[RMDB]
RNA sequence: GGGAACGACUCGAGUAGAGUCGAAAAGCGUAACGGCUGGGUGUAACCCAACUCUAGGUGUGCUGAUUAGCGGGUUUGACUCCGUAACAAAUAGGCACUGGUGGUAAAAAGCAUCCCACCUACUCACAAAGCUCCAAAUUCUUCGGAAUUUGGAGAACAAAGGUCACAUGUUCGCAUGUGACCUUUGAAAAGAAACAACAACAACAAC
Reactivity to 2A3 in 0.01 (KOAc 150mM, MgCl2 10mM, bicine 150mM(pH8.5), 24C), signal-to-noise 2, nucleotides 027 to 156: g030c010g040u050a040a060c050g070g000c080u040g020g030g020u060g060u120a100a120c010c010c030a070a090c010u090c070u080a080g050g060u030g000u020g060c000u040g010a110u060u080a050g030c020g000g030g010u000u110u210g070a050c020u010c040c010g000u010a050a010c010a030a070a090u110a040g030g040c030a000c030u010g020g000u070g010g030u040a100a110a050a040a010g040c000a000u100c020c000c000a000c000c000u020a050c010u030c030a090c050a060a140a040g030c000u000c000c000a000a000a000u000u010c010u010u060c130g070g000a000a000u000u000u000g000g000a000g000a000a000
Reactivity to DMS in 0.01 (KOAc 150mM, MgCl2 10mM, bicine 150mM(pH8.5), 24C), signal-to-noise 1, nucleotides 027 to 156: g020c040g020u010a140a160c080g010g050c140u000g010g020g000u000g000u040a020a300c020c010c000a090a060c020u010c020u000a150g010g090u000g020u000g040c000u000g000a150u000u000a160g000c050g010g000g010u000u000u040g020a080c200u020c010c000g020u000a020a130c090a030a040a060u000a070g000g030c000a040c000u000g000g010u010g000g000u000a090a060a110a110a200g010c050a140u000c060c000c020a070c050c040u000a090c020u000c040a100c050a070a070a190g010c000u000c000c010a000a000a000u000u000c000u000u000c300g070g020a000a000u000u010u000g020g000a010g000a020a050
Chemical mapping of a 207-nucleotide RNA with 2A3 and DMS. For 2A3 the reverse transcriptase was SuperScript II with manganese. Reactivities are given for positions 27 through 156. For 2A3, 1,142 sequencing reads were counted.